[RMDB]
RNA sequence: GGGAACGACUCGAGUAGAGUCGAAAAACACAAGAAUUCUAUUAUUGUGGAUUGCACGCUGGGUCUUGCUGGUCAUGCAACAGCUUUUCUUAAAGCUGCUCCUCUUGCAACGCUUGUAGGCAUAGACCAUAUCGAUGCUAUUCGUAGCAUCGAUAUGAAAAGAAACAACAACAACAAC
Reactivity to 2A3 in 0.01 (KOAc 150mM, MgCl2 10mM, bicine 150mM(pH8.5), 24C), signal-to-noise 6, nucleotides 027 to 126: a000c020a000c020a010a030g060a080a090u290u200c110u160a150u300u060a080u080u070g010u020g010g080a080u050u160g020c040a020c070g050c060u090g050g010g010u030c020u040u040g000c010u030g010g140u090c020a050u110g030c010a030a020c000a040g000c000u010u010u030u050c080u060u300a030a020a000g000c000u010g020c020u020c020c010u050c030u010u050g020c030a090a100c080g020c090u070u090g070u180a040g050g000c010a030u100a060g040a030c010
Reactivity to DMS in 0.01 (KOAc 150mM, MgCl2 10mM, bicine 150mM(pH8.5), 24C), signal-to-noise 9, nucleotides 027 to 126: a110c020a030c030a030a020g010a090a090u000u010c170u010a080u010u000a080u000u000g020u000g000g010a150u000u000g020c040a070c270g000c080u000g010g010g000u000c040u000u000g010c020u000g000g010u000c070a060u000g010c040a040a090c020a010g000c000u000u000u000u010c220u010u010a020a010a020g010c000u000g000c080u000c060c030u000c090u000u000g000c030a050a090c180g010c060u000u000g010u000a280g010g000c060a050u010a060g000a080c090
Overview:
An RNA of 177 nucleotides, treated with 2A3 and DMS and read out base by base. The RNA was probed in 150 mM KOAc, 10 mM MgCl2 and 150 mM bicine (pH 8.5) at 24 C. For DMS the reverse transcriptase was MarathonRT.